[RMDB]
RNA sequence: GGGAACGACUCGAGUAGAGUCGAAAAAUAAUUGAAAUGGGCUCAUCUCUUUUAGGGGAGUUCCAAAUAAUACCAUUUCUAAGGGAACUAAUACCUUAAUACUAUUGAAUGAAGACUCCAGAUUCAACUGUAUGAAAUAGUUCGCUAUUUCAUACAGAAAAGAAACAACAACAACAAC
Reactivity to 2A3 in 0.01 (KOAc 150mM, MgCl2 10mM, bicine 150mM(pH8.5), 24C), signal-to-noise 8, nucleotides 027 to 126: a000u100a010a040u040u040g020a010a020a030u020g000g000g010c010u000c000a090u020c040u010c010u050u120u050u150a040g000g000g010g000a010g000u000u020c020c010a020a060a030u190a030a050u130a150c060c040a080u060u080u040c090u130a090a070g080g000g010a020a010c040u040a080a130u140a270c020c010u030u050a060a030u090a150c110u120a090u190u070g030a050a050u040g010a060a020g040a040c050u030c050c030a050g060a260u030u030c010a030a060
Reactivity to DMS in 0.01 (KOAc 150mM, MgCl2 10mM, bicine 150mM(pH8.5), 24C), signal-to-noise 4, nucleotides 027 to 126: a040u030a100a250u040u000g000a010a030a160u000g000g000g000c070u010c010a030u000c050u010c030u020u010u010u000a040g040g000g000g010a030g000u010u020c030c010a050a110a040u030a090a110u030a090c170c090a090u010u040u010c100u030a140a110g020g000g010a030a050c050u010a080a120u030a100c020c000u010u000a010a040u030a110c200u050a030u020u010g000a080a020u000g010a060a040g020a050c020u020c010c010a040g010a100u000u000c020a040a150